[RMDB]
RNA sequence: GGGAACGACUCGAGUAGAGUCGAAAAGGGGUCGAUCCGAUAAGGGAGCUGGGAGGAGCUUGGACCUAAUACUGAAGCCUCCACGGUAUUAGCUAGCUCCUCGCUCCCUUUUGACGGAUCGACGGAGGCACCCAAAAGUAGCGAUUCGUCGCUACAACACAUUUCAGUGCUUCGGCACUGAAAUGUGAAAAGAAACAACAACAACAAC
Reactivity to 2A3 in 0.01 (KOAc 150mM, MgCl2 10mM, bicine 150mM(pH8.5), 24C), signal-to-noise 1, nucleotides 027 to 156: g090g000g040g020u000c010g010a000u010c010c020g010a090u270a240a090g010g020g010a000g000c060u190g200g300g000a050g000g010a020g000c070u300u300g040g000a000c000c010u000a000a000u000a000c000u020g040a150a020g000c000c000u040c000c000a000c000g000g000u000a000u000u000a000g010c010u000a010g000c000u000c000c020u000c020g000c000u000c000c000c000u010u000u000u020g000a000c000g000g000a000u000c000g000a000c000g000g000a000g000g050c010a090c000c000c000a100a230a010a100g000u010a000g010c010g000a000u040u100c270g030u020c000g230c000u000a000c000a010a010